Annotation: This 177-nucleotide RNA was probed chemically with 2A3 and DMS. 2A3 adducts were read by reverse transcription with SuperScript II with manganese. In probing experiments dimethyl sulfate is read out at A N1 and C N3, which are open when not base-paired. High 2A3 reactivity points to a flexible backbone, as in loops and unpaired stretches. The RNA was probed in 150 mM KOAc, 10 mM MgCl2 and 150 mM bicine (pH 8.5) at 24 C. It was measured as part of the RMDB library OK1LIB. For 2A3, 2,113 sequencing reads were counted.

RNA sequence: GGGAACGACUCGAGUAGAGUCGAAAAGAAAAGAAGGAGGCCGUAGUAGAUCUGUGGUGACGAAAGUCAACUCCAUUGGUCACCUCUUCCGCCGAUCCGUAUUAUGGCCGAUGGAGGUGGAGAGAAAGGCUAAUCUAUUCUUCGGAAUAGAUUAGCCAAAAGAAACAACAACAACAAC
Reactivity to 2A3 in 0.01 (KOAc 150mM, MgCl2 10mM, bicine 150mM(pH8.5), 24C), signal-to-noise 2, nucleotides 027 to 126: g040a000a080a010a010g070a000a100g030g010a030g000g000c000c010g000u000a000g000u020a030g000a050u010c000u000g010u020g000g000u010g020a010c010g030a020a000a060g020u000c010a010a170c030u000c030c000a030u030u010g020g020u000c000a010c010c000u020c030u070u000c050c040g000c000c000g030a080u060c000c020g020u010a090u200u130a080u230g030g010c000c040g010a020u030g000g000a000g000g010u060g020g000a110g000a000g060a020a110a000
Reactivity to DMS in 0.01 (KOAc 150mM, MgCl2 10mM, bicine 150mM(pH8.5), 24C), signal-to-noise 2, nucleotides 027 to 126: g010a120a020a070a040g000a120a040g010g000a040g000g010c000c050g080u000a020g000u010a100g010a010u050c020u000g000u000g020g000u020g020a020c020g000a120a090a160g000u000c020a080a110c090u020c000c000a100u030u000g000g000u000c030a030c110c020u030c070u020u000c020c180g020c020c050g020a070u010c020c080g000u000a080u030u000a030u020g010g010c020c040g000a040u000g010g000a050g020g000u000g000g010a110g010a080g040a090a070a040